About this RNA:
The record gives the reactivity of an RNA of 207 nucleotides to DMS and 2A3. The RNA was probed in 150 mM KOAc, 10 mM MgCl2 and 150 mM bicine (pH 8.5) at 24 C. Reactivities are given for positions 27 through 156. DMS adducts were read by reverse transcription with MarathonRT. The data come from the RNA Mapping Database (RMDB), library RNAMAK.
[RMDB]
RNA sequence: GGGAACGACUCGAGUAGAGUCGAAAAGAUAUGGACGUUGUGAAAGACAAGCUGACACUUGGAUUUAAGCGUUCGGAAACGAACGCUUUGUCAGUGUCAGAACUACUUGGGGAGCAACGUCCUAAGUCAAAUAUCAUUCGUUUCGACGAAUGAUAAAUCAUUUGCAUUCGUUCGCGAAUGCAAAUGAAAAAGAAACAACAACAACAAC
Reactivity to DMS in 0.01 (KOAc 150mM, MgCl2 10mM, bicine 150mM(pH8.5), 24C), signal-to-noise 1, nucleotides 027 to 156: g000a070u000a150u000g000g000a050c000g000u010u000g000u000g000a180a100a090g020a160c040a040a040g030c010u010g010a010c010a010c020u000u020g060g000a050u020u000u000a000a000g000c020g010u000u000c000g000g000a110a160a280c000g010a020a000c000g020c010u000u010u000g010u010c000a020g050u000g020u000c020a020g010a040a120c070u010a070c010u000u010g040g010g040g000a300g000c020a040a050c040g000u000c000c000u000a010a070g000u010c020a090a100a150u010a030u000c000a020u000u000c020g020u000u000u000c300g040a050c000g010a020a010u000g000a030u000a000a070a110
Reactivity to 2A3 in 0.01 (KOAc 150mM, MgCl2 10mM, bicine 150mM(pH8.5), 24C), signal-to-noise 5, nucleotides 027 to 156: g040a020u060a040u090g010g000a010c010g000u000u010g010u040g140a200a110a070g160a050c020a010a010g000c000u000g000a000c000a010c030u090u230g140g000a040u250u290u100a010a000g000c000g000u010u000c020g010g010a080a060a000c000g000a000a000c000g000c000u000u000u000g010u000c000a020g000u000g000u010c000a000g000a000a030c020u110a020c010u030u010g000g000g050g060a150g040c010a000a000c000g000u000c000c010u020a030a000g010u000c020a020a040a050u120a010u040c000a000u000u000c000g010u000u010u170c260g120a030c000g000a000a010u020g010a000u020a010a060a020